[RMDB]
RNA sequence: GGGAACGACUCGAGUAGAGUCGAAAAGGUACUCUGAAUGGAGUGCUCUACUGAGAUUAUAAAAUAGAAGGUAAGCUAUUAUCUCUUACAACAGGGCAGGGCUUGUUGGAAUAGGCGGUAAAGUCUAAAAACUACCUCACCUUCGGGUGAGGUAGAAGUUCACCUAGAAGUUCGCUUCUAGGUGAACAAAAGAAACAACAACAACAAC
Reactivity to 2A3 in 0.01 (KOAc 150mM, MgCl2 10mM, bicine 150mM(pH8.5), 24C), signal-to-noise 1, nucleotides 027 to 156: g050g000u020a030c010u010c040u040g300a230a120u300g060g000a000g000u000g020c010u020c080u110a040c010u060g060a020g040a080u080u000a070u200a070a100a080a020u150a070g030a150a010g100g040u120a030a070g000c040u000a000u040u000a020u100c020u010c000u060u120a050c020a140a000c000a000g030g120g010c020a070g070g040g000c060u030u000g000u000u010g000g020a020a070u000a040g010g010c010g040g060u090a080a040a020g010u020c020u100a130a000a000a060a060c000u000a000c000c000u000c000a010c000c000u030u070c230g100g000g000u000g030a000g030g000u000a000g000a000a000

This 207-nucleotide RNA was probed chemically with 2A3.
It was measured as part of the RMDB library M2RFPK.
The reactions ran in a buffer of 150 mM KOAc, 10 mM MgCl2 and 150 mM bicine (pH 8.5), at 24 C.
The 2A3 profile rests on 468 reads.